[RMDB]
RNA sequence: GGGAACGACUCGAGUAGAGUCGAAAAGUGUAGUUUUCCACUUUGCGCUAAUGGUCUUGUAUUCGGCUUAUACAAGAAUAUGUGCACAGGUAGUCCUUCUAUAGUUGAAUUUAAUAGGUUGGCUACCGACAUUUGUCGAGUUCGCUCGACAAAUGUCAAAAGAAACAACAACAACAAC
Reactivity to 2A3 in 0.01 (KOAc 150mM, MgCl2 10mM, bicine 150mM(pH8.5), 24C), signal-to-noise 1, nucleotides 027 to 126: g020u050g010u080a060g020u040u000u040u060c020c000a020c000u080u040u030g000c000g000c000u050a050a070u140g180g010u030c000u010u000g000u020a030u020u090c030g140g000c080u080u110a000u000a000c000a010a000g010a000a000u020a030u070g000u000g030c010a000c000a060g000g020u000a000g020u030c010c000u000u010c000u020a110u020a080g100u080u190g070a130a120u130u070u130a120a000u020a010g060g000u020u010g020g000c000u000a000c000c000
Reactivity to DMS in 0.01 (KOAc 150mM, MgCl2 10mM, bicine 150mM(pH8.5), 24C), signal-to-noise 1, nucleotides 027 to 126: g020u000g020u000a070g010u000u000u020u000c030c000a070c070u000u000u000g010c010g020c000u000a140a180u000g020g020u000c000u000u000g000u000a030u000u000c170g010g030c160u010u000a080u000a010c010a010a010g010a020a010u000a080u000g000u010g020c010a110c300a130g000g010u000a020g000u000c020c040u010u000c000u000a030u000a050g000u010u010g020a160a170u000u020u000a070a030u000a010g010g030u000u010g000g000c010u000a010c010c000

The record gives the reactivity of an RNA of 177 nucleotides to 2A3 and DMS.
The 2A3 profile rests on 1,014 reads.
It was measured as part of the RMDB library 15KREP.
The DMS profile rests on 1,071 reads.
For 2A3 the reverse transcriptase was SuperScript II with manganese.